RNA sequence: GGGAACGACUCGAGUAGAGUCGAAAAUCGGGUUCCAGGCAGCGAGCUUGACGGAAAGGGACGCCGCUUCUAGAACCGACUGAAAAUUUUGAAUGACUGAAACAGGUUUCAGUUUCUCAAGCGGCUACGUAUCCCAAAAUUUCGAUUUUGGGAUACGAAAAGAAACAACAACAACAAC
Reactivity to 2A3 in 0.01 (KOAc 150mM, MgCl2 10mM, bicine 150mM(pH8.5), 24C), signal-to-noise 2, nucleotides 027 to 126: u040c010g010g020g030u030u000c010c010a010g060g010c040a020g050c010g120a060g010c020u030u110g060a050c000g060g100a090a080a100g020g000g010a000c020g010c000c000g000c030u050u020c020u010a020g020a060a020c020c020g020a030c020u000g030a000a050a050a090u170u290u170u050g050a100a060u130g050a060c100u080g040a040a060a010c030a060g110g010u020u020u020c000a010g010u020u100u000c050u010c010a020a010g030c020g020g000c020u040a030
Reactivity to DMS in 0.01 (KOAc 150mM, MgCl2 10mM, bicine 150mM(pH8.5), 24C), signal-to-noise 4, nucleotides 027 to 126: u010c030g020g020g010u000u000c010c050a080g030g010c120a060g020c040g000a120g010c010u000u010g020a230c060g020g000a070a060a160g000g000g010a220c130g010c010c010g030c010u010u000c090u000a080g010a050a070c150c060g010a050c040u000g000a040a050a040a090u000u010u010u010g000a090a090u010g000a070c110u000g000a050a050a120c090a120g010g010u000u000u010c010a010g010u010u010u010c080u000c190a050a040g020c090g000g020c020u010a090